RNA sequence: GGGAACGACUCGAGUAGAGUCGAAAAGAUAUGGACUGGAACUACAGCCGAAAGGACCAUCGAUCGAAGCUCGGAAACGAGCUUCGGGAGGUCCUAGUAGCUGCUGCCAGUCCUAAGUCAAAAGGUUCAAUCGUAGGUUCGCCUACGAUUGAACCAAGGGUUACUGAUAGUUCGCUAUCAGUAACCCAAAAGAAACAACAACAACAAC
Reactivity to 2A3 in 0.01 (KOAc 150mM, MgCl2 10mM, bicine 150mM(pH8.5), 24C), signal-to-noise 1, nucleotides 027 to 156: g040a000u050a050u080g000g000a000c010u010g000g000a130a040c070u150a050c170a010g070c110c030g050a090a070a030g020g000a000c000c020a120u270c030g050a030u030c020g010a020a010g020c010u000c010g050g040a030a080a070c010g010a000g030c000u000u010c000g000g000g000a010g000g010u000c000c000u010a000g010u000a010g000c110u040g000c010u030g000c000c000a000g000u000c000c000u000a000a000g020u000c050a060a000a020a200g000g000u020u030c000a000a000u040c010g000u010a000g000g080u020u010c230g090c050c000u000a000c000g000a000u000u000g000a000a000c000c000a000a020

This 207-nucleotide RNA was probed chemically with 2A3. The reactions ran in a buffer of 150 mM KOAc, 10 mM MgCl2 and 150 mM bicine (pH 8.5), at 24 C. The 2A3 profile rests on 1,482 reads. Values cover nucleotides 27 to 156.